Overview
The record gives the reactivity of an RNA of 177 nucleotides to DMS and 2A3. The data come from the RNA Mapping Database (RMDB), libraries RFM100 and RFMREP. For 2A3 the reverse transcriptase was SuperScript II with manganese. Conditions: 150 mM KOAc, 10 mM MgCl2 and 150 mM bicine (pH 8.5), 24 C.

RNA sequence: GGGAACGACUCGAGUAGAGUCGAAAAAACCAUGGCGUAGGGCGAAUAACCGCAUCGCGGUUAUCCGCCGGCUGUGCAGGGCAGCGGCCCUUGCCCGGAUUUUGGGCAGCGUGCACCAGCAGGCGACCUAUCCAUACUUUUUCGAAAGUAUGGAUAGAAAAGAAACAACAACAACAAC
Reactivity to DMS in 0.01 (KOAc 150mM, MgCl2 10mM, bicine 150mM(pH8.5), 24C), signal-to-noise 9, nucleotides 027 to 126: a080a050c070c010a090u020g010g000c050g020u020a070g010g010g010c020g010a030a010u000a000a000c010c000g020c010a120u020c270g020c000g000g000u000u000a000u000c020c010g010c000c000g000g010c010u000g010u000g010c040a080g000g010g010c010a150g010c110g010g010c010c010c010u000u000g010c010c000c010g010g000a160u010u010u020u020g010g010g010c000a030g010c110g010u020g010c010a060c080c060a070g010c020a160g000g000c020g010a110c160
Reactivity to 2A3 in 0.01 (KOAc 150mM, MgCl2 10mM, bicine 150mM(pH8.5), 24C), signal-to-noise 8, nucleotides 027 to 126: a000a000c060c010a100u080g060g000c040g060u070a110g130g000g000c010g010a030a010u010a010a000c010c000g000c060a130u160c290g010c000g000g000u000u010a010u010c000c000g000c000c000g000g010c000u010g010u030g010c030a060g000g040g000c020a100g140c080g210g030c030c010c000u010u050g020c010c000c000g080g060a240u180u160u180u230g020g010g000c010a010g040c060g100u090g000c010a040c060c010a030g020c010a010g040g040c010g010a040c000